Structure probing data (DMS and 2A3) for a 177-nucleotide construct. Conditions: 150 mM KOAc, 10 mM MgCl2 and 150 mM bicine (pH 8.5), 24 C.
[RMDB]
RNA sequence: GGGAACGACUCGAGUAGAGUCGAAAAGAUAUGGACCCUAAAGCUCGAAGAACUAUAGGCACUUCGGAAACGAAAACCUAUAGGGAGAGCUUAGGGUCCUAAGUCAAAACGACGCUUCGGCGUCGAAGCGAUAUAUUUUCUUCGGAAAAUAUAUCGCAAAAGAAACAACAACAACAAC
Reactivity to DMS in 0.01 (KOAc 150mM, MgCl2 10mM, bicine 150mM(pH8.5), 24C), signal-to-noise 3, nucleotides 027 to 126: g000a020u010a280u020g010g010a010c000c000c000u010a030a040a090g010c010u000c030g000a100a140g030a150a160c000u000a000u000a000g010g030c300a100c300u010u000c010g010g010a030a030a090c000g000a020a040a100a120c020c000u000a000u010a000g000g000g000a020g000a020g010c000u000u000a020g000g000g020u000c000c000u000a000a040g000u000c030a090a050a110a190c010g000a020c010g000c000u000u020c190g010g010c020g010u000c000g000a020a080
Reactivity to 2A3 in 0.01 (KOAc 150mM, MgCl2 10mM, bicine 150mM(pH8.5), 24C), signal-to-noise 3, nucleotides 027 to 126: g020a010u050a010u070g000g010a000c010c010c000u130a250a210a010g010c000u030c000g300a300a090g000a070a010c010u000a000u000a000g000g000c100a020c160u090u040c020g030g000a050a040a010c010g000a010a010a040a180c010c000u010a000u000a010g030g000g000a070g000a000g010c000u000u000a000g000g020g000u000c000c000u000a000a000g000u000c000a010a000a030a050c010g010a000c000g000c000u050u110c240g180g000c000g000u000c010g000a000a000

About this RNA: 2A3 adducts were read by reverse transcription with SuperScript II with manganese. As a SHAPE reagent, 2A3 marks flexible, mostly unpaired nucleotides at the ribose 2'-OH.